Chemical mapping of a 177-nucleotide RNA with DMS and 2A3. The RNA was probed in 150 mM KOAc, 10 mM MgCl2 and 150 mM bicine (pH 8.5) at 24 C. For 2A3 the reverse transcriptase was SuperScript II with manganese. The data come from the RNA Mapping Database (RMDB), library OK1LIB.
RNA sequence: GGGAACGACUCGAGUAGAGUCGAAAAACUAGUAUGUACAGGGGUGAGUUGACCUGUCAUCUAGACUGCUGACCAUCAACUCACCGGUGAGCUGGAUGAUGUCCACAGAGUACGACAUCAGUACUCAGUGUAAGCAUGCGUUCGCGUAUGUUUACACAAAAGAAACAACAACAACAAC
Reactivity to DMS in 0.01 (KOAc 150mM, MgCl2 10mM, bicine 150mM(pH8.5), 24C), signal-to-noise 9, nucleotides 027 to 126: a120c030u000a030g020u020a040u010g020u040a050c060a080g010g010g010g010u000g000a020g010u000u000g000a030c130c170u010g000u000c000a010u000c040u010a080g010a140c170u010g010c090u000g000a040c030c300a290u000c010a010a010c000u000c000a030c020c040g000g010u010g000a080g000c030u010g000g000a060u010g010a060u020g010u000c020c050a080c170a100g000a050g010u000a030c030g010a110c190a110u040c120a080g010u000a020c010u000c020a150
Reactivity to 2A3 in 0.01 (KOAc 150mM, MgCl2 10mM, bicine 150mM(pH8.5), 24C), signal-to-noise 9, nucleotides 027 to 126: a000c020u030a020g050u070a080u190g080u080a040c020a040g140g040g000g020u030g020a020g010u010u010g020a030c030c070u030g020u000c000a010u000c000u030a070g140a250c100u090g020c020u020g030a020c010c020a020u020c000a000a010c000u000c000a010c000c000g020g030u050g000a020g020c020u020g010g010a040u060g010a020u070g060u020c020c010a070c050a080g030a010g020u040a010c040g070a030c070a140u110c040a040g010u010a010c000u010c040a010